This 177-nucleotide RNA was probed chemically with DMS and 2A3. Conditions: 150 mM KOAc, 10 mM MgCl2 and 150 mM bicine (pH 8.5), 24 C. High DMS reactivity at an A or C suggests that its Watson-Crick edge is free. For 2A3 the reverse transcriptase was SuperScript II with manganese.
[RMDB]
RNA sequence: GGGAACGACUCGAGUAGAGUCGAAAAAGGUUAACCCGUGUGGGGUAGCCGUAGCGAAAGCGAGUCCGAAUAGGGCGUUUGUAGUGGCAUGUUCUAGACCCGAAGCGGAGUGAUCUACCCAUGGCCAGUAUGAGCACACGUUCGCGUGUGCUCAUACAAAAGAAACAACAACAACAAC
Reactivity to DMS in 0.01 (KOAc 150mM, MgCl2 10mM, bicine 150mM(pH8.5), 24C), signal-to-noise 1, nucleotides 027 to 126: a010g070g000u010u010a010a040c000c010c000g090u000g020u120g000g000g000g000u000a000g090c160c010g050u020a020g010c110g000a100a160a020g000c000g000a030g000u000c000c050g030a020a160u010a230g030g000g000c000g000u030u050u090g030u000a130g050u150g000g150c000a070u000g000u000u040c130u000a020g000a050c000c010c010g020a040a300g000c020g000g040a080g010u050g000a000u000c010u020a090c010c040c030a000u010g030g000c000c040a100
Reactivity to 2A3 in 0.01 (KOAc 150mM, MgCl2 10mM, bicine 150mM(pH8.5), 24C), signal-to-noise 2, nucleotides 027 to 126: a020g030g000u070u060a090a100c040c000c080g030u050g050u180g000g020g010g000u070a010g000c020c010g050u010a000g000c000g020a030a040a030g000c010g040a000g000u000c040c030g170a130a150u170a300g000g000g000c020g130u080u110u150g110u050a130g050u040g020g000c010a000u050g070u190u170c150u140a150g010a180c000c000c000g090a110a000g020c050g060g030a100g100u030g000a000u000c080u070a080c000c000c000a010u080g020g000c030c000a010